[RMDB]
RNA sequence: GGGAACGACUCGAGUAGAGUCGAAAAUAACCCCUAUACUUGUAUAGGCGAUUAAUAAAUCUUCUGUAAAUGCUGUAAGAGGAGUACCCCUUGAGGUUUCAGCACUAGGCUGCUCUAGCGAUUAAUCACAACGAUUUGGUCUUCGGACCAAAUCGAACUCAAACACAUUCUUCGGAAUGUGUUUGAGAAAAGAAACAACAACAACAAC
Reactivity to 2A3 in 0.01 (KOAc 150mM, MgCl2 10mM, bicine 150mM(pH8.5), 24C), signal-to-noise 1, nucleotides 027 to 156: u080a010a040c020c030c000c000u060a070u020a130c000u120u200g030u050a070u030a060g000g010c080g060a050u000u140a140a070u150a180a170a030u050c050u110u020c030u120g200u160a060a070a100u130g000c040u030g090u150a120a010g020a040g050g060a050g020u030a020c000c000c000c060u010u070g050a100g030g110u050u100u200c030a020g000c010a030c060u020a020g160g010c010u020g030c000u050c010u030a030g040c030g020a070u060u140a050a130u140c020a000c050a180a070c080g010a000u000u000u000g020g000u010c020u010u030c160g080g010a000c030c010a000a000a000u000c000g000a000a000